Annotation
The data come from the RNA Mapping Database (RMDB), library OK2TST. Structure probing data (DMS and 2A3) for a 177-nucleotide construct. 2A3 adducts were read by reverse transcription with SuperScript II with manganese. The reactions ran in a buffer of 150 mM KOAc, 10 mM MgCl2 and 150 mM bicine (pH 8.5), at 24 C. For DMS, 3,343 sequencing reads were counted.
RNA sequence: GGGAACGACUCGAGUAGAGUCGAAAAGGACACGAUCGAAUUUACGACCAUAUGAUGCUUGAUGGAUUGGAAGAUGCCUACGAUAAGGGAAAAGCGAUGGGCGUUUUUGCCGAGAAAUGCGUGGAUAACUAGGGGUAGUGUUCGCACUACCCCUAGUAAAAGAAACAACAACAACAAC
Reactivity to DMS in 0.01 (KOAc 150mM, MgCl2 10mM, bicine 150mM(pH8.5), 24C), signal-to-noise 3, nucleotides 027 to 126: g010g000a110c040a030c070g010a060u000c020g020a150a060u000u020u000a090c080g010a080c030c030a060u000a060u010g030a080u000g000c040u010u010g010a060u000g000g000a120u000u000g000g020a080a040g020a060u010g030c040c010u000a070c070g010a110u000a050a120g000g000g010a030a040a040a060g010c010g030a140u000g010g000g020c020g020u000u010u000u020u000g020c100c020g000a100g000a050a080a030u000g000c070g030u000g000g010a100u000a070
Reactivity to 2A3 in 0.01 (KOAc 150mM, MgCl2 10mM, bicine 150mM(pH8.5), 24C), signal-to-noise 2, nucleotides 027 to 126: g090g000a050c030a000c060g020a080u030c030g050a020a050u070u040u100a050c030g000a010c010c040a010u050a070u190g170a030u130g030c040u060u050g050a080u060g060g100a090u060u050g050g020a020a020g050a030u090g070c000c000u030a040c040g060a060u070a120a110g120g020g000a060a130a000a030g030c010g070a090u050g020g020g050c010g000u030u010u000u030u100g030c030c000g020a010g060a050a130a010u130g020c030g010u030g040g040a030u090a090